[RMDB]
Structure probing data (DMS and 2A3) for a 177-nucleotide construct. DMS (dimethyl sulfate) methylates the pairing face of unpaired adenines and cytosines. For 2A3 the reverse transcriptase was SuperScript II with manganese. Values cover nucleotides 27 to 126.
RNA sequence: GGGAACGACUCGAGUAGAGUCGAAAAGCGACCGAUAAUCGCAUGUUCGGACGGGCCGUUCAAGCAGUAUCUGAUCCGGAAGGUGCCGACGCUGGAGAACAAGUACUGGCCCACCUUUUGGUGUGUGACUGACCAUAUAGUUCGCUAUAUGGUCAGUAAAAGAAACAACAACAACAAC
Reactivity to DMS in 0.01 (KOAc 150mM, MgCl2 10mM, bicine 150mM(pH8.5), 24C), signal-to-noise 7, nucleotides 027 to 126: g000c020g010a050c040c060g020a120u040a120a290u020c020g010c020a050u030g000u000u000c020g000g010a100c050g000g000g000c030c020g020u000u000c040a080a130g020c060a080g010u000a050u010c050u010g010a110u000c010c010g000g010a070a060g000g020u000g010c120c120g020a100c100g010c030u000g000g010a140g000a090a080c160a070a080g010u030a060c070u010g010g010c030c040c020a030c030c000u020u020u010u000g010g010u010g000u010g000u020g010
Reactivity to 2A3 in 0.01 (KOAc 150mM, MgCl2 10mM, bicine 150mM(pH8.5), 24C), signal-to-noise 8, nucleotides 027 to 126: g040c020g040a050c030c040g080a070u210a080a080u080c030g000c070a060u130g070u050u030c010g020g030a040c030g030g000g020c000c030g000u040u050c050a050a040g040c030a040g080u130a090u090c040u100g080a070u020c010c020g010g020a040a040g050g020u050g030c040c030g040a090c080g010c020u040g030g020a090g030a110a060c110a180a020g040u050a070c040u060g020g000c020c000c010a010c010c020u040u110u100u120g060g000u040g020u030g040u060g120

Conditions: 150 mM KOAc, 10 mM MgCl2 and 150 mM bicine (pH 8.5), 24 C.